[RMDB]
RNA sequence: GGGAACGACUCGAGUAGAGUCGAAAACAAUGUGGUGUUCGGACUGACUUUCAUCGUUUGACCGUUCGUGUGAAGUCUCCUGAAACGGAGCGCGAUACAGGGUGACAGCCCCGUAUCACGGACCAGUCAUGUAACCCCUGUUCGCAGGGGUUACAUGAAAAGAAACAACAACAACAAC
Reactivity to DMS in 0.01 (KOAc 150mM, MgCl2 10mM, bicine 150mM(pH8.5), 24C), signal-to-noise 2, nucleotides 027 to 126: c040a090a070u010g020u000g000g010u010g000u050u000c060g000g010a020c040u010g010a110c030u040u020u000c050a090u010c050g020u000u000u000g000a050c110c300g000u030u000c000g060u000g020u010g000a030a030g000u040c010u000c000c040u000g010a020a270a060c020g020g020a030g000c030g040c000g040a300u010a060c020a040g000g000g000u010g040a140c160a030g010c000c010c000c000g030u000a300u000c000a030c040g020g000a070c040c160a100g010u000
Reactivity to 2A3 in 0.01 (KOAc 150mM, MgCl2 10mM, bicine 150mM(pH8.5), 24C), signal-to-noise 3, nucleotides 027 to 126: c030a020a140u220g070u130g130g140u060g030u080u080c030g030g060a060c010u050g040a080c010u040u060u050c100a080u020c020g050u000u030u110g180a130c010c020g010u010u000c010g000u000g000u020g020a010a020g020u040c010u000c010c000u010g010a030a030a020c040g000g000a020g010c010g000c000g000a000u010a050c060a040g000g000g010u020g030a030c000a010g000c000c000c000c000g000u010a000u000c000a010c000g010g010a010c000c010a020g070u000